[RMDB]
RNA sequence: GGGAACGACUCGAGUAGAGUCGAAAAUUAAGCUGAAGAAAUCCAUUGCGGAAACUAACAAUGCAGUGCAGGAAAUCAUUAAUGGCCAACAGCAGCUAGGGAUAGCAAUCGGGAAGAUCCAGGAUUAAACCGUCUAAAUGUUCGCAUUUAGACGGUUAAAAGAAACAACAACAACAAC
Reactivity to DMS in 0.01 (KOAc 150mM, MgCl2 10mM, bicine 150mM(pH8.5), 24C), signal-to-noise 2, nucleotides 027 to 126: u000u000a070a100g000c060u000g000a110a170g000a080a090a090u000c040c030a090u020u000g000c140g000g000a060a120a120c090u000a020a040c050a080a080u000g020c020a010g030u000g000c030a050g020g000a060a060a060u040c130a080u000u000a050a080u020g000g000c060c040a040a080c080a020g040c070a000g020c010u000a110g010g030g000a100u020a030g020c030a040a110u040c120g020g000g010a020a040g000a060u000c030c050a060g010g010a200u000u000a050